[RMDB]
RNA sequence: GGGAACGACUCGAGUAGAGUCGAAAACACUGCUUCGGCAGUGAAAAAGCGUACUACGCUUUCUCUAGCGUGGCGCGUAUGUAGACCUCCCAAAUAGGAGGUCCGAAGUACGAACUACGCUCGGGAAGCGUAUCGCAAAAAGCCGCUUCGGCGGCAAGGUCUGUUACAAGUUCGCUUGUAACAGACCAAAAGAAACAACAACAACAAC
Reactivity to 2A3 in 0.01 (KOAc 150mM, MgCl2 10mM, bicine 150mM(pH8.5), 24C), signal-to-noise 2, nucleotides 027 to 156: c000a000c000u000g000c000u030u040c120g180g000c000a000g010u000g100a060a000a000a000a010g040c040g030u100a130c080u000a000c070g000c060u060u240u020c020u000c020u000a000g000c000g020u000g000g000c080g000c010g000u030a010u300g030u050a020g010a000c010c050u080c000c010c020a130a300a060u180a100g000g000a000g020g000u000c070c000g030a030a030g000u000a000c000g000a030a020c000u000a010c010g000c000u010c000g000g010g010a000a000g000c000g000u000a000u050c000g000c000a000a000a000a000a280g020c000c050g000c010u080u110c270g200g010c010g050g000c000a020a020